[RMDB]
RNA sequence: GGGAACGACUCGAGUAGAGUCGAAAAUUGCUGCAGGGGCUGAAGAGUGCACAGACGUGAAUAGCUCAGCUGCCAGCCCGGCCUCUGGCAAGGGCUCUCUAAUGUCUGUUCUGUGAACCAGGGACUCCACCGUGGCAGUAUUCGUACUGCCACGGUGAAAAGAAACAACAACAACAAC
Reactivity to DMS in 0.01 (KOAc 150mM, MgCl2 10mM, bicine 150mM(pH8.5), 24C), signal-to-noise 1, nucleotides 027 to 126: u000u000g030c040u000g030c060a030g010g000g000g010c050u000g030a080a100g010a130g020u000g020c130a080c050a040g000a030c080g070u000g010a100a120u000a100g020c050u000c010a080g030c120u000g010c000c020a100g000c160c090c010g020g010c040c050u000c010u000g010g030c010a040a050g010g010g010c010u000c080u000c060u010a080a050u000g010u010c020u000g000u000u010c020u000g000u000g000a130a090c040c000a020g000g030g010a100c080u000c020